The record gives the reactivity of an RNA of 177 nucleotides to DMS and 2A3.

[RMDB]
RNA sequence: GGGAACGACUCGAGUAGAGUCGAAAAUUAAACAUGGUUACCAUAUUGAUUCCGACAAGGUAGCCAUGAGUCGGAAUCAAAAUAUAAAAGCUCAGCGUUAGGAAAAACCUAAUGCUCAGCAAAAAAAGAAGUAAGAUUGAUUCGUCAAUCUUACUUCAAAAGAAACAACAACAACAAC
Reactivity to DMS in 0.01 (KOAc 150mM, MgCl2 10mM, bicine 150mM(pH8.5), 24C), signal-to-noise 2, nucleotides 027 to 126: u000u030a110a090a100c070a030u000g000g000u000u000a060c050c010a150u010a110u000u020g010a030u010u010c030c010g000a020c000a090a120g000g010u000a020g000c050c120a020u010g000a110g010u000c010g050g020a020a050u010c020a030a040a140a110u010a080u010a050a070a080a220g000c000u000c220a010g000c000g050u000u000a000g000g010a140a120a080a170a160c000c000u000a000a000u000g000c000u000c160a010g040c000a000a000a050a080a120a050a050
Reactivity to 2A3 in 0.01 (KOAc 150mM, MgCl2 10mM, bicine 150mM(pH8.5), 24C), signal-to-noise 1, nucleotides 027 to 126: u070u030a050a040a000c040a040u060g040g010u070u060a060c020c030a060u050a160u170u080g020a030u050u020c020c010g010a020c030a090a140g100g010u030a020g090c000c020a020u020g000a010g020u030c000g000g020a000a000u020c030a020a000a120a000u220a000u030a020a130a020a020g010c000u000c000a000g000c000g000u000u000a000g020g010a130a170a080a110a070c000c000u010a000a020u010g000c000u000c020a010g000c000a000a000a090a000a010a000a090
The reactions ran in a buffer of 150 mM KOAc, 10 mM MgCl2 and 150 mM bicine (pH 8.5), at 24 C.